[RMDB]
RNA sequence: GGGAACGACUCGAGUAGAGUCGAAAAAUGGAGACAAGAUGUACUCAGACCCAGGAUCGGUGCCGGGACAUCUCGUAGACCACGAUUACACCCUGGACCGUCCACUCAUUGGAGAGGAGCUGGACGACAUCAUUAGUAGCUUCGGCUACUAAUGAUGAAAAGAAACAACAACAACAAC
Reactivity to DMS in 0.01 (KOAc 150mM, MgCl2 10mM, bicine 150mM(pH8.5), 24C), signal-to-noise 9, nucleotides 027 to 126: a080u000g000g010a140g010a040c050a060a020g020a030u010g010u000a120c010u000c020a120g010a080c020c010c030a190g010g010a090u010c170g020g010u000g020c050c030g000g000g000a050c030a020u000c030u000c030g020u000a080g000a090c050c020a030c040g000a160u010u000a130c190a120c030c000c010u010g010g010a120c160c000g000u000c000c000a060c030u010c020a100u010u010g010g010a110g010a160g000g000a020g010c190u000g000g010a020c020g010a220
Reactivity to 2A3 in 0.01 (KOAc 150mM, MgCl2 10mM, bicine 150mM(pH8.5), 24C), signal-to-noise 9, nucleotides 027 to 126: a000u040g020g000a040g000a010c020a020a020g020a050u030g010u120a300c000u010c030a040g020a150c020c010c030a070g160g160a150u210c120g020g040u080g160c110c060g000g010g010a010c010a020u010c000u000c020g010u020a040g100a180c010c010a010c030g020a010u080u110a030c030a110c050c000c000u030g100g050a070c070c000g000u000c000c000a000c010u020c010a060u050u230g110g060a120g030a070g090g040a000g020c110u020g000g000a010c000g010a020
The record gives the reactivity of an RNA of 177 nucleotides to DMS and 2A3.
For 2A3, 46,730 sequencing reads were counted.
DMS adducts were read by reverse transcription with MarathonRT.
The reactions ran in a buffer of 150 mM KOAc, 10 mM MgCl2 and 150 mM bicine (pH 8.5), at 24 C.